Description: This 177-nucleotide RNA was probed chemically with DMS and 2A3. DMS adducts were read by reverse transcription with MarathonRT.
RNA sequence: GGGAACGACUCGAGUAGAGUCGAAAACACUCUCUGUGAGUCACACAGAGACACUGAGACACUGUCUGUGUGACACUGUGACACUGAGAGUGUGUCAGUGUGACUGUCACACUCUGAGAGAGACACAACAUGAGUCCCGUUUCGACGGGACUCAUGUAAAAGAAACAACAACAACAAC
Reactivity to DMS in 0.01 (KOAc 150mM, MgCl2 10mM, bicine 150mM(pH8.5), 24C), signal-to-noise 2, nucleotides 027 to 126: c110a190c040u000c000u000c010u000g020u000g010a050g010u020c150a170c180a020c010a000g010a070g000a060c020a030c050u000g010a050g000a060c060a010c050u000g010u000c000u000g030u010g020u000g010a030c040a100c270u000g060u000g000a050c060a040c000u000g000a010g020a030g000u000g010u000g000u000c000a000g020u020g010u010g000a080c010u020g010u010c080a100c140a040c000u000c000u020g030a020g010a040g000a070g010a170c160a020c190a060
Reactivity to 2A3 in 0.01 (KOAc 150mM, MgCl2 10mM, bicine 150mM(pH8.5), 24C), signal-to-noise 1, nucleotides 027 to 126: c030a040c010u000c000u000c030u020g060u030g060a020g000u010c010a000c000a000c000a050g010a000g050a020c020a010c030u040g030a000g030a020c030a010c070u040g090u160c000u000g010u010g000u020g040a010c050a190c180u250g030u080g120a000c000a000c020u040g030a010g000a000g020u030g000u010g090u020c000a010g010u020g070u040g130a100c010u000g000u020c040a030c010a010c010u000c010u180g060a040g010a000g000a000g000a040c020a030c010a270
Record summary: For 2A3 the reverse transcriptase was SuperScript II with manganese. The DMS profile rests on 1,245 reads.